[RMDB]
RNA sequence: GGGAACGACUCGAGUAGAGUCGAAAAGCUGAGGGUGAAGACGGCCAGAACUUGGAGAAGAGACGGAAUCUUCUGAACUGCCUCAUCGUCCGAAUCCUCAAGGCCCAUGGAGAUGAGGGGCUGCACAACAUAGGUUAGCGUUCGCGCUAACCUAUGUAAAAGAAACAACAACAACAAC
Reactivity to DMS in 0.01 (KOAc 150mM, MgCl2 10mM, bicine 150mM(pH8.5), 24C), signal-to-noise 3, nucleotides 027 to 126: g010c060u000g050a050g000g020g020u010g010a200a080g000a050c020g030g000c060c070a060g020a130a190c190u000u030g020g000a090g000a070a120g000a050g010a070c090g000g010a100a180u000c050u000u030c150u010g000a030a140c030u000g010c050c010u000c050a100u000c020g040u000c010c010g000a190a020u000c010c010u000c090a040a090g000g020c000c000c020a090u000g000g020a120g010a050u010g000a060g000g000g010g030c100u000g050c080a070c170a080
Reactivity to 2A3 in 0.01 (KOAc 150mM, MgCl2 10mM, bicine 150mM(pH8.5), 24C), signal-to-noise 2, nucleotides 027 to 126: g040c050u020g000a020g010g000g020u030g000a010a000g000a010c010g010g030c000c010a040g040a140a100c070u070u090g030g100a120g020a120a010g010a010g020a020c160g050g110a120a080u040c010u080u000c040u110g040a090a060c010u060g050c030c040u060c030a060u030c020g020u000c000c010g000a010a020u020c010c000u000c020a010a030g070g000c000c010c030a020u100g060g020a140g030a090u130g060a070g050g000g030g000c090u100g000c080a060c020a100

This 177-nucleotide RNA was probed chemically with DMS and 2A3. For DMS, 1,880 sequencing reads were counted. For 2A3 the reverse transcriptase was SuperScript II with manganese. For 2A3, 2,096 sequencing reads were counted. The reactions ran in a buffer of 150 mM KOAc, 10 mM MgCl2 and 150 mM bicine (pH 8.5), at 24 C.